[RMDB]
RNA sequence: GGGAACGACUCGAGUAGAGUCGAAAAUGGUGGAAGGGGAAGAAGGCAUGUCUUAAUGGCAGCAGGUGAGAGAGCUUGUGAAGGAAGUGAAGGGCGAAGAUCCUCUUAUGAAACUGUCAGAUCUGGUGAGAACUCACUCACUAUCACGAGAAUAGCCCAUUUCGACAUUUUUCGAAAUGUCGAAAUGAAAAGAAACAACAACAACAAC
Reactivity to 2A3 in 0.01 (KOAc 150mM, MgCl2 10mM, bicine 150mM(pH8.5), 24C), signal-to-noise 4, nucleotides 027 to 156: u080g000g020u050g030g030a050a010g030g010g010g020a000a040g040a020a020g050g000c050a080u050g030u050c030u030u170a130a080u190g050g000c020a010g000c020a030g070g010u080g000a040g010a000g000a000g020c050u060u050g030u040g050a050a050g030g010a010a010g020u030g070a060a020g030g000g000c010g000a020a000g030a030u030c040c000u030c030u060u090a070u150g080a080a060a050c030u030g050u070c030a010g020a120u040c030u060g040g000u020g030a020g020a050a060c050u030c080a050c010u010c010a010c010u040a030u110c040a030c070g030a030g000a080a050u040a070g020c020c000
Reactivity to DMS in 0.01 (KOAc 150mM, MgCl2 10mM, bicine 150mM(pH8.5), 24C), signal-to-noise 2, nucleotides 027 to 156: u030g000g000u000g000g000a120a080g030g000g030g000a050a070g020a060a080g000g030c120a040u010g000u000c040u000u000a050a140u010g020g000c020a040g010c020a090g090g050u000g010a110g000a090g000a100g000c040u000u000g000u000g010a110a090g010g010a050a120g030u000g000a040a110g000g010g040c050g000a040a150g010a110u000c020c020u000c060u000u010a170u000g020a150a030a060c000u010g000u010c040a110g010a040u000c030u000g030g040u000g010a060g000a080a140c090u010c110a080c000u020c010a090c050u000a120u000c010a070c040g020a150g010a060a090u010a070g020c030c060